An RNA of 207 nucleotides, treated with DMS and 2A3 and read out base by base. It was measured as part of the RMDB library RNAMAK. Conditions: 150 mM KOAc, 10 mM MgCl2 and 150 mM bicine (pH 8.5), 24 C.
RNA sequence: GGGAACGACUCGAGUAGAGUCGAAAAGCGUACUACCACUCGGACCGUGCUCUUGGAUUUAUGUAUCUCUAGCGUGUCCCAAAUAGGAUCGGGUACAUUGUCAGAGCAUUAGUACGAGUGGUAUCGCAAAACCGUUGUAUGUUCGCAUACAACGGAACACCAAAAAAGAGUUCGCUCUUUUUUGGUGAAAAGAAACAACAACAACAAC
Reactivity to DMS in 0.01 (KOAc 150mM, MgCl2 10mM, bicine 150mM(pH8.5), 24C), signal-to-noise 3, nucleotides 027 to 156: g030c020g010u010a070c120u010a010c020c010a030c000u010c000g020g000a010c040c050g030u000g010c000u000c000u010u020g060g020a040u000u000u010a010u010g010u000a010u000c010u010c030u000a150g020c190g040u000g020u000c000c010c020a040a160a220u010a060g000g000a030u000c030g010g010g030u000a020c010a010u000u000g010u000c010a030g010a050g010c000a020u000u000a030g010u000a030c010g000a020g010u020g000g000u000a000u010c010g010c000a080a060a120a120c000c000g010u000u000g000u000a010u000g020u000u000c300g030c030a020u000a010c000a010a020c010g020g010a030a060
Reactivity to 2A3 in 0.01 (KOAc 150mM, MgCl2 10mM, bicine 150mM(pH8.5), 24C), signal-to-noise 9, nucleotides 027 to 156: g000c010g060u100a090c050u010a000c020c000a010c000u000c000g010g010a010c000c010g000u010g010c010u010c010u070u240g240g010a100u260u300u090a020u070g020u020a040u020c060u040c130u210a090g120c090g140u270g050u100c030c010c020a190a300a160u300a130g000g010a010u040c040g010g000g010u000a000c000a010u010u020g010u010c010a000g000a000g000c000a000u020u040a020g000u010a000c000g000a000g000u000g000g000u000a000u020c000g000c000a030a040a010a070c000c000g000u000u000g000u000a000u000g030u010u050c210g000c150a000u000a000c000a000a000c000g000g000a010a010